Background
Chemical mapping of a 207-nucleotide RNA with 2A3. For 2A3, 897 sequencing reads were counted. Conditions: 150 mM KOAc, 10 mM MgCl2 and 150 mM bicine (pH 8.5), 24 C. It was measured as part of the RMDB library OK3TST. Reactivities are given for positions 27 through 156.
RNA sequence: GGGAACGACUCGAGUAGAGUCGAAAAGUCAUGCCUUCGGGCAUGACAGGUACCGAGAGGUACCAAAUAGCGUACAGCAGACACAGACUGUACGCUAAAAAAGUGUGUGUUCAAUAAGGACCAAUUGAACACACACUAAAAUGGUCCAAGUGUGUGACUAUUACCUGCCCUUCGGGGCAGGUAAUAGAAAAGAAACAACAACAACAAC
Reactivity to 2A3 in 0.01 (KOAc 150mM, MgCl2 10mM, bicine 150mM(pH8.5), 24C), signal-to-noise 1, nucleotides 027 to 156: g000u000c000a000u020g000c010c010u010u100c250g080g000g000c010a010u010g000a000c000a020g010g000u010a000c020c000g000a000g010a000g070g020u030a000c010c000a050a060a030u040a000g000c000g010u000a000c000a020g030c020a000g050a060c010a000c000a030g070a010c000u000g000u000a000c000g000c000u010a030a050a000a000a000a000g010u010g000u000g000u000g000u000u000c010a070a070u090a190a220g170g040a060c020c030a050a060u000u000g000a010a000c000a000c000a000c000a000c020u000a000a000a000a000u010g030g000u000c000c020a080a020g030u040g010u000g020u020g030a010